[RMDB]
RNA sequence: GGGAACGACUCGAGUAGAGUCGAAAACUACAUAAAUUCGUUUAUGUAGCAUCGGGGACGGGCAGACUCCCCGUCAGACGGCUCUAGCCUUCCAAGCUCUGCACUCAACAGCUUUCGAGCUGUUGAACUAUGAACUACCUUUCGAGGUAGUUCAUAGAAAAGAAACAACAACAACAAC
Reactivity to DMS in 0.01 (KOAc 150mM, MgCl2 10mM, bicine 150mM(pH8.5), 24C), signal-to-noise 8, nucleotides 027 to 126: c010u000a000c000a000u000a000a000a040u000u010c200g010u000u000u000a000u000g000u000a000g010c100a100u010c020g010g000g000g000a010c170g010g010g000c010a020g000a030c020u000c000c000c000c010g010u010c100a020g010a050c090g010g000c010u010c240u010a130g010c010c010u000u000c020c300a030a030g000c060u000c010u000g000c010a180c250u000c000a000a010c010a000g000c000u000u000u010c190g010a020g010c000u000g000u000u000g000a010a110
Reactivity to 2A3 in 0.01 (KOAc 150mM, MgCl2 10mM, bicine 150mM(pH8.5), 24C), signal-to-noise 6, nucleotides 027 to 126: c000u010a000c000a010u020a010a020a010u080u080c140g050u040u010u000a010u000g000u000a010g020c030a120u180c010g000g000g000g000a020c120g050g130g000c010a000g010a020c000u000c000c000c000c000g000u010c000a010g010a020c030g010g000c030u060c160u300a060g010c010c000u030u010c020c080a010a010g000c050u000c000u010g010c010a050c040u010c000a000a000c000a010g040c000u070u100u220c260g130a010g000c000u000g000u000u000g000a000a000